Conditions: 150 mM KOAc, 10 mM MgCl2 and 150 mM bicine (pH 8.5), 24 C. Structure probing data (2A3 and DMS) for a 207-nucleotide construct. The 2A3 profile rests on 1,343 reads. Reactivities are rounded to 0.1 and cut off at 0 and 3. As a SHAPE reagent, 2A3 marks flexible, mostly unpaired nucleotides at the ribose 2'-OH. Reactivities are given for positions 27 through 156.

RNA sequence: GGGAACGACUCGAGUAGAGUCGAAAACUUAUCCGGUUUUAACGCUGUUUUAUUGGCGCAAAGGUUUACGGAUAAACAACUAAUAAUUAAACCUUUUGUGUGCGAAACGAGGUUGUUUAACGUACUCACUGCCCCCAGGGAUUCGUCCCUGGGGGAAACUGUAGUAAUCUUUCGAGAUUACUACAGUAAAAGAAACAACAACAACAAC
Reactivity to 2A3 in 0.01 (KOAc 150mM, MgCl2 10mM, bicine 150mM(pH8.5), 24C), signal-to-noise 2, nucleotides 027 to 156: c020u030u020a010u000c020c000g020g020u010u020u030u030a060a010c010g000c030u030g130u210u200u130u260a140u220u260g010g020c020g000c010a030a000a010g010g000u000u000u010a000c000g000g010a010u010a030a130a010c060a010a000c020u110a050a100u150a280a040u230u150a030a000a000c000c000u040u020u100u050g080u000g010u010g020c030g020a050a100a050c030g030a120g170g010u050u020g030u010u060u040a060a010c000g030u020a010c000u010c100a100c080u080g000c000c000c000c000c000a000g010g000g010a010u040u020c080g000u000c020c000c000u000g000g000g000g000g000a000a010
Reactivity to DMS in 0.01 (KOAc 150mM, MgCl2 10mM, bicine 150mM(pH8.5), 24C), signal-to-noise 1, nucleotides 027 to 156: c040u010u000a000u000c030c010g030g010u000u010u000u000a130a110c030g020c010u000g010u010u020u000u000a200u040u010g030g030c020g060c010a060a050a060g090g010u000u000u000a140c030g000g050a080u000a010a020a080c040a070a090c060u000a070a120u010a080a120u000u000a050a100a000c000c010u000u000u000u000g030u000g020u010g010c050g010a060a100a130c060g020a140g000g000u000u000g000u000u030u000a040a200c060g030u000a050c050u000c010a150c100u000g010c000c010c040c000c080a040g010g020g040a040u000u000c300g000u000c000c000c000u000g020g020g000g000g000a000a000